[RMDB]
RNA sequence: GGGAACGACUCGAGUAGAGUCGAAAACACGCCGUCCGGAGCCUGCGCGUCGUCCAGGGCUUCGAGUUUCGACAGUAGAUCGGACAGCAGGUUCCGAAGCUCGGCCCUGGGGUUCGGCCGCGACGGCGCUUUGAGAGCAAUUCGUUGCUCUCAAAGCAAAAGAAACAACAACAACAAC
Reactivity to DMS in 0.01 (KOAc 150mM, MgCl2 10mM, bicine 150mM(pH8.5), 24C), signal-to-noise 3, nucleotides 027 to 126: c100a210c090g010c010c000g000u000c020c060g000g010a110g020c010c000u000g020c050g000c150g010u000c040g020u010c000c020a020g010g010g000c040u010u010c080g010a020g030u000u000u000c010g000a140c190a130g020u000a110g010a120u010c090g000g000a070c130a160g010c090a100g000g000u000u000c050c000g010a010a020g000c020u010c010g000g010c030c000c000u000g000g020g000g010u000u010c050g010g010c020c000g010c050g010a010c010g010g010c020
Reactivity to 2A3 in 0.01 (KOAc 150mM, MgCl2 10mM, bicine 150mM(pH8.5), 24C), signal-to-noise 3, nucleotides 027 to 126: c060a010c030g000c000c000g020u010c030c020g120g100a060g050c010c030u050g010c040g000c040g060u040c000g050u000c020c000a010g020g020g000c020u190u230c050g010a000g000u010u040u020c050g040a050c050a100g160u230a050g040a210u130c080g020g060a030c020a050g190c070a040g120g110u080u010c010c000g000a000a010g000c010u000c010g000g000c010c000c000u020g020g000g010g030u180u140c010g000g000c000c020g000c030g000a000c010g000g000c010